Source: RMDB library TTRDEL, as collected in RNAgym. Structure probing data (2A3 and DMS) for a 177-nucleotide construct. Reactivities are given for positions 27 through 126. DMS adducts were read by reverse transcription with MarathonRT. Conditions: 150 mM KOAc, 10 mM MgCl2 and 150 mM bicine (pH 8.5), 24 C.

[RMDB]
RNA sequence: GGGAACGACUCGAGUAGAGUCGAAAAGAUAUGGAGAAAGCAACAGCUCGAGUGUCGGAAACGACACCGAGACAUGCUUCUCCUAAGUCAAAAGACUGUAGGAUAAGUUCGCUUAUCCUACAGUCAAGUUGAAAAAGUACUUCGGUACUUUUUCAACAAAAGAAACAACAACAACAAC
Reactivity to 2A3 in 0.01 (KOAc 150mM, MgCl2 10mM, bicine 150mM(pH8.5), 24C), signal-to-noise 1, nucleotides 027 to 126: g010a020u060a020u130g020g020a010g000a080a210a020g060c010a010a110c020a180g060c000u010c030g200a300g070u000g010u000c010g020g030a020a070a060c000g000a000c000a000c010c010g010a000g030a000c010a010u030g010c000u000u010c000u000c000c000u030a250a050g040u050c040a000a060a160a150g020a000c000u010g000u010a000g000g000a000u000a000a010g020u010u070c060g020c000u000u000a000u000c000c010u000a000c000a000g000u010c000a000a000
Reactivity to DMS in 0.01 (KOAc 150mM, MgCl2 10mM, bicine 150mM(pH8.5), 24C), signal-to-noise 4, nucleotides 027 to 126: g000a030u000a300u010g000g000a010g000a040a010a040g010c000a020a070c230a160g020c010u000c000g000a150g010u000g000u000c000g000g000a080a050a140c000g000a010c000a000c000c000g000a010g010a050c040a120u000g010c010u000u000c000u000c000c000u000a010a060g000u010c030a090a130a150a130g000a010c000u000g010u000a000g010g000a000u000a000a000g020u000u030c240g030c000u000u000a010u000c000c000u000a000c000a000g000u000c010a010a050